[RMDB]
RNA sequence: GGGAACGACUCGAGUAGAGUCGAAAAGAUCACUUCGGCUUGAGAGCGAUACGCGCUCCGUGGUGCUCAUAAUUAUUCGCGUUACGCACUACCGUGUAACAUCCCGGCUCGAGACGAAUCUGGUCGCUCUCGGUGGAGGUUUCGACCUUCACUGGGGAAAAGAAACAACAACAACAAC
Reactivity to 2A3 in 0.01 (KOAc 150mM, MgCl2 10mM, bicine 150mM(pH8.5), 24C), signal-to-noise 9, nucleotides 027 to 126: g010a010u010c010a000c020u010u000c000g020g010c010u030u040g020a030g000a020g100c050g040a050u060a170c090g040c020g020c090u020c070c050g040u040g010g010u040g000c020u030c120a060u090a170a080u170u200a110u150u190c090g010c040g160u070u080a040c050g000c010a020c040u020a040c020c060g030u030g020u060a070a040c020a140u050c020c020c000g050g010c010u000c010g010a010g010a010c010g010a010a010u020c020u020g010g000u010c010g010c020
Reactivity to DMS in 0.01 (KOAc 150mM, MgCl2 10mM, bicine 150mM(pH8.5), 24C), signal-to-noise 4, nucleotides 027 to 126: g000a000u000c030a010c140u000u000c000g000g020c090u000u010g000a260g000a110g020c240g000a240u030a060c160g020c050g010c300u040c120c240g010u020g010g010u020g000c050u030c160a110u000a070a100u020u040a110u050u070c300g060c300g010u000u010a060c160g000c040a060c070u000a060c060c090g020u000g010u020a050a100c060a300u020c040c030c010g010g010c000u000c000g010a000g000a020c000g010a010a040u000c130u000g000g000u010c010g030c090